An RNA of 177 nucleotides, treated with DMS and 2A3 and read out base by base. The DMS profile rests on 1,420 reads. The RNA was probed in 150 mM KOAc, 10 mM MgCl2 and 150 mM bicine (pH 8.5) at 24 C. 2A3 adducts were read by reverse transcription with SuperScript II with manganese.
[RMDB]
RNA sequence: GGGAACGACUCGAGUAGAGUCGAAAAGGGAACUAGAACCGAAUACAAGCAAAUGUUAUUUUGUGGGACUGAUUUUAGGAUUUUUGUUCGGGGAUAAAGUCCUUUCAAAUGGAGUACAAACAGAAAACUACAACUAUCGCUUCGGCGAUAGUUGUAGAAAAGAAACAACAACAACAAC
Reactivity to DMS in 0.01 (KOAc 150mM, MgCl2 10mM, bicine 150mM(pH8.5), 24C), signal-to-noise 1, nucleotides 027 to 126: g050g000g040a060a070c010u090a140g000a300a190c010c050g060a000a000u040a050c060a060a300g000c000a000a040a070u000g010u000u040a040u000u000u000u000g060u030g000g000g000a060c050u000g010a010u000u000u000u000a080g080g000a080u010u000u090u000u020g000u000u070c080g010g010g000g000a090u000a030a050a060g000u000c060c000u000u000u000c020a040a030a150u030g040g030a060g000u030a090c080a010a110a040c110a040g000a140a040a010a020
Reactivity to 2A3 in 0.01 (KOAc 150mM, MgCl2 10mM, bicine 150mM(pH8.5), 24C), signal-to-noise 2, nucleotides 027 to 126: g040g010g000a030a080c000u000a010g000a030a010c010c000g030a010a000u020a040c030a030a040g000c020a000a010a010u040g080u300u240a140u120u090u090u000g000u120g060g060g080a090c060u040g090a170u110u110u050u160a170g190g080a300u120u070u000u000u140g080u000u000c000g000g010g000g000a020u070a120a150a000g000u000c000c000u000u070u100c060a100a100a060u180g140g020a120g080u150a060c120a040a170a000c010a020g300a080a070a000a000